Source: RMDB libraries RFM100 and RFMREP, as collected in RNAgym.
An RNA of 177 nucleotides, treated with DMS and 2A3 and read out base by base.
The reactions ran in a buffer of 150 mM KOAc, 10 mM MgCl2 and 150 mM bicine (pH 8.5), at 24 C.

RNA sequence: GGGAACGACUCGAGUAGAGUCGAAAACACCUCUACGCUCAGCGCACACAACCCCGAAAAAGACUUCGGCCCCCGCCGGGACGGCAAUCCCAGUGCGAGGGCCUGACCACCAAGGAAGUCGGCCUUCCAAUUGGACUAACUUCGGUUAGUCCAAUUGAAAAGAAACAACAACAACAAC
Reactivity to DMS in 0.01 (KOAc 150mM, MgCl2 10mM, bicine 150mM(pH8.5), 24C), signal-to-noise 5, nucleotides 027 to 126: c080a140c050c020u020c040u010a050c060g040c040u010c030a070g010c050g000c030a070c020a060c090a110a140c060c020c000c040g010a050a090a100a120a040g010a070c060u010u010c030g000g020c010c010c010c030c010g020c000c010g030g010g020a020c050g020g040c230a070a300u020c020c010c010a050g050u040g010c020g020a070g010g000g000c000c000u010g000a040c050c030a050c070c090a060a110g000g010a030a040g000u000c030g000g010c090c030u000u030c030
Reactivity to 2A3 in 0.01 (KOAc 150mM, MgCl2 10mM, bicine 150mM(pH8.5), 24C), signal-to-noise 4, nucleotides 027 to 126: c060a060c010c010u040c020u070a020c020g030c030u020c050a020g020c020g020c040a000c010a010c010a080a120c020c010c000c010g060a080a070a010a000a000g070a040c040u040u020c060g000g000c000c000c000c000c000g010c000c000g010g000g010a030c030g110g080c030a020a070u010c000c000c010a040g060u120g110c010g010a030g000g000g000c000c010u000g000a000c000c020a020c010c010a050a050g050g020a020a020g030u030c020g020g030c000c000u050u020c010